[RMDB]
RNA sequence: GGGAACGACUCGAGUAGAGUCGAAAAAACGAUUUCACUUAUGCAAGCACGGCGCUGCCAUACGGAUGUGUAGUCGAAUGGCCGACGAACCGCGCUUAGAAGCCGGCGCGCACCCCUUCGAAGAGGGGCCAAUUAUCCCUUUCGAGGGAUAAUUGGCAAAAGAAACAACAACAACAAC
Reactivity to 2A3 in 0.01 (KOAc 150mM, MgCl2 10mM, bicine 150mM(pH8.5), 24C), signal-to-noise 1, nucleotides 027 to 126: a000a010c050g020a000u030u120u150c060a080c020u190u180a040u170g020c070a060a030g000c030a000c030g070g030c000g000c030u000g000c030c000a060u070a100c000g110g020a030u080g120u040g060u300a060g060u020c010g000a030a030u030g010g000c060c050g130a270c020g010a140a000c010c010g020c030g000c020u000u010a040g000a120a020g030c040c000g000g070c080g060c000g040c090a130c020c030c000c010u040u080c040g080a060a010g060a030g050g010g010
Reactivity to DMS in 0.01 (KOAc 150mM, MgCl2 10mM, bicine 150mM(pH8.5), 24C), signal-to-noise 1, nucleotides 027 to 126: a120a080c080g020a050u000u000u000c020a080c090u000u010a050u020g010c120a060a060g000c010a020c020g020g000c040g030c030u000g010c040c030a030u000a070c120g000g000a100u000g060u030g040u000a100g000u000c040g020a150a030u010g000g000c030c030g010a070c030g000a080a070c040c000g000c010g000c000u000u000a110g010a110a110g040c030c050g010g020c110g000c060g020c100a190c040c000c010c010u000u000c030g010a060a050g000a050g000g030g000